[RMDB]
RNA sequence: GGGAACGACUCGAGUAGAGUCGAAAAUUGGAUCUGUUAUUCCUAGUAGUUUUGAGGAGUAGCUAAUUGCAGAGUCAAAGCCUAGCCGGUCUAAUAUUCUUAAUGCCGGAAUAUUUAAGGACAAAGCAGGCUAAUAAAUGUUCGCAUUUAUUAGCCUAAAAGAAACAACAACAACAAC
Reactivity to 2A3 in 0.01 (KOAc 150mM, MgCl2 10mM, bicine 150mM(pH8.5), 24C), signal-to-noise 5, nucleotides 027 to 126: u090u120g050g010a020u010c030u060g010u080u030a020u010u030c000c000u010a070g050u040a090g020u060u020u100u250g130a030g010g000a020g030u080a030g030c110u170a100a090u130u140g060c040a010g020a010g100u060c020a050a060a000g050c000c010u040a030g050c050c030g090g000u020c000u050a040a030u020a050u120u040c020u070u190a160a100u120g110c070c080g000g000a000a000u020a000u000u090u050a090a070g050g010a030c050a010a080a000g090c050
Reactivity to DMS in 0.01 (KOAc 150mM, MgCl2 10mM, bicine 150mM(pH8.5), 24C), signal-to-noise 4, nucleotides 027 to 126: u020u010g010g010a040u000c050u010g020u000u010a030u000u000c000c010u000a100g010u020a110g010u010u010u030u020g000a050g000g000a090g020u010a050g000c080u020a090a070u020u030g030c020a040g000a300g010u000c010a030a100a100g010c030c000u010a110g000c080c080g000g000u010c070u000a020a020u000a050u010u020c020u020u020a050a100u040g010c120c090g000g000a010a040u000a000u020u010u010a070a110g000g010a020c030a060a140a120g010c130